[RMDB]
RNA sequence: GGGAACGACUCGAGUAGAGUCGAAAAGCGCAAUGGUAACCUGCUUAUUAUCAGGGAUAUUCCUGACCGACUUCUCCAUAAAGGCUUCCAUUUCCGGGCCAACCCAGACGACUAAGUCCGCGCCCUGGCCUCGUGGGGAGUUCGCUCCCCACGAGGCAAAAGAAACAACAACAACAAC
Reactivity to 2A3 in 0.01 (KOAc 150mM, MgCl2 10mM, bicine 150mM(pH8.5), 24C), signal-to-noise 2, nucleotides 027 to 126: g040c070g020c100a130a150u080g010g000u070a050a060c050c010u110g030c180u140u100a100u120u040a150u230c020a040g100g000g050a050u110a050u300u130c010c000u010g030a030c000c000g120a060c000u110u040c000u070c010c000a010u140a180a100a000g100g000c080u140u030c010c010a040u050u020u020c030c090g000g050g020c040c010a130a110c030c010c000a010g010a060c020g050a110c020u050a110a050g030u000c010c000g000c010g040c040c000c000u000g080
Structure probing data (2A3) for a 177-nucleotide construct. The RNA was probed in 150 mM KOAc, 10 mM MgCl2 and 150 mM bicine (pH 8.5) at 24 C. Reactivities are rounded to 0.1 and cut off at 0 and 3.